Background:
The record gives the reactivity of an RNA of 177 nucleotides to 2A3 and DMS. It was measured as part of the RMDB library OK1LIB. For DMS the reverse transcriptase was MarathonRT.
[RMDB]
RNA sequence: GGGAACGACUCGAGUAGAGUCGAAAAGUAAUGAUAAUAGUAUUAAUAUAGCUCCAGAUCCUGACUUUUUGGAUAUAGUUGCUUUACAUAGGCCAGCAUUAACCUCUAGGCGUACUGGCAUUAGGUAUCUACACGUCUUGUUCGCAAGACGUGUAGAAAAAGAAACAACAACAACAAC
Reactivity to 2A3 in 0.01 (KOAc 150mM, MgCl2 10mM, bicine 150mM(pH8.5), 24C), signal-to-noise 1, nucleotides 027 to 126: g040u020a000a160u060g070a080u060a010a100u030a200g010u000a160u160u090a070a160u090a080u040a130g040c000u000c000c000a090g000a030u020c000c000u100g060a150c050u090u020u050u140u040g000g010a000u000a000u100a250g020u000u010g000c000u100u190u050a040c000a000u120a070g010g000c000c000a010g000c050a000u190u090a150a160c000c000u070c050u200a160g050g050c050g000u000a030c030u040g000g000c000a050u040u110a010g010g010u030a020
Reactivity to DMS in 0.01 (KOAc 150mM, MgCl2 10mM, bicine 150mM(pH8.5), 24C), signal-to-noise 1, nucleotides 027 to 126: g000u020a120a020u010g010a120u050a070a220u040a160g000u000a120u040u030a060a120u040a130u010a090g040c010u030c060c010a070g030a030u030c020c010u000g020a110c190u040u020u000u000u020g000g010a100u000a080u040a100g010u000u000g000c140u000u000u000a020c060a080u020a080g010g010c000c000a000g000c140a030u010u000a130a160c000c000u000c120u020a060g010g070c050g010u000a120c010u010g030g030c010a040u020u000a020g000g010u000a050